[RMDB]
Structure probing data (2A3 and DMS) for a 177-nucleotide construct. 2A3 adducts were read by reverse transcription with SuperScript II with manganese. The reactions ran in a buffer of 150 mM KOAc, 10 mM MgCl2 and 150 mM bicine (pH 8.5), at 24 C.

RNA sequence: GGGAACGACUCGAGUAGAGUCGAAAAGGUUGAUGGUUUUGCCAGCGAAGGGAUUAUUCAGUUCUUUUUCGAAGGCACUGCCGAUGAAAAAGGCUUCAAUAUUUAUAUCUUGGAUGAAGCAAACCGAUACCAUGGUAGGGUUCGCCCUACCAUGGUAAAAAGAAACAACAACAACAAC
Reactivity to 2A3 in 0.01 (KOAc 150mM, MgCl2 10mM, bicine 150mM(pH8.5), 24C), signal-to-noise 1, nucleotides 027 to 126: g100g010u070u010g090a100u180g010g000u060u020u080u070g040c060c000a030g060c060g050a030a010g040g000g000a000u020u000a060u070u300c040a010g040u050u240c000u070u160u000u010u040c020g080a090a060g030g000c020a060c210u140g000c010c020g000a040u070g000a050a000a020a020a020g020g000c030u050u000c040a080a040u100a080u140u300u180a150u180a020u130c030u050u060g120g030a120u070g070a040a020g030c000a010a010a000c010c050g000a050
Reactivity to DMS in 0.01 (KOAc 150mM, MgCl2 10mM, bicine 150mM(pH8.5), 24C), signal-to-noise 1, nucleotides 027 to 126: g010g000u000u010g020a120u030g010g020u000u000u010u000g000c010c020a120g010c050g010a130a080g020g010g010a030u000u010a050u010u020c210a090g000u000u000c000u000u010u000u010u000c010g020a080a250g000g010c010a050c170u000g010c000c000g000a140u010g000a020a020a040a060a060g000g010c010u010u010c060a020a150u000a090u000u000u000a070u020a070u020c040u020u000g000g010a220u000g010a070a120g010c010a030a020a050c040c010g000a220